[RMDB]
RNA sequence: GGGAACGACUCGAGUAGAGUCGAAAACAUGAUUGCUCGGCAACUAUAAUGACGGGUAGGUCGGGUACGAACCGUCGUAUGGUUCGUCAGCUUUUUGGGCUAAAGGGAAGAGAGCUGGGCGAACUGACUGGUACUGUACAUUCGUGUACAGUGCCAGAAAAGAAACAACAACAACAAC
Reactivity to 2A3 in 0.01 (KOAc 150mM, MgCl2 10mM, bicine 150mM(pH8.5), 24C), signal-to-noise 9, nucleotides 027 to 126: c050a060u150g020a130u100u110g010c010u020c030g020g000c010a050a020c070u060a020u050a150a140u130g050a020c030g020g010g030u050a050g040g080u060c040g030g010g060u100a060c040g030a050a020c010c000g070u080c030g060u050a110u080g020g000u000u000c010g000u000c010a000g000c000u030u030u020u060u050g090g020g000c060u140a130a080a100g080g040g020a080a030g060a010g000a000g040c010u030g010g070g030c010g010a020a010c010u020g080a040
Reactivity to DMS in 0.01 (KOAc 150mM, MgCl2 10mM, bicine 150mM(pH8.5), 24C), signal-to-noise 8, nucleotides 027 to 126: c070a100u030g010a080u020u010g010c000u000c020g000g000c030a070a080c160u030a090u030a090a100u020g000a040c060g010g000g010u010a060g010g010u010c040g010g000g010u010a040c080g010a050a090c020c010g000u020c130g000u020a100u030g010g010u000u000c020g000u000c070a030g000c030u010u000u000u000u010g010g010g030c060u030a070a100a130g010g000g010a170a120g010a030g000a040g000c020u000g010g020g000c030g010a040a050c020u000g000a200